Notes
The record gives the reactivity of an RNA of 177 nucleotides to DMS. The data come from the RNA Mapping Database (RMDB), library TTRINS. The RNA was probed in 150 mM KOAc, 10 mM MgCl2 and 150 mM bicine (pH 8.5) at 24 C. High DMS reactivity at an A or C suggests that its Watson-Crick edge is free.
RNA sequence: GGGAACGACUCGAGUAGAGUCGAAAAGAUAUGGAUUACCCCCUCGCCCGUGAACUACGAACGAAAAAAUUGAUCGGAAACGAUCAAUUUUUUCCUUCGCACGGGAAACGGGGCGUAAUCCUAAGUCGAUACCAAACAACUUCGGUUGUUUGGUAUCAAAAGAAACAACAACAACAAC
Reactivity to DMS in 0.01 (KOAc 150mM, MgCl2 10mM, bicine 150mM(pH8.5), 24C), signal-to-noise 1, nucleotides 027 to 126: g000a110u010a300u020g000g010a030u000u000a000c040c000c000c000c000u000c300g020c000c000c000g000u000g010a100a080c180u020a300c000g010a000a000c300g000a000a010a020a000a020a000u000u000g000a000u000c000g000g000a150a040a240c000g000a000u000c000a010a000u010u000u000u000u000u000c010c060u000u010c000g000c000a010c000g000g000g000a010a030a060c270g010g010g000g020c300g020u010a000a010u010c000c010u020a020a110g000u000c040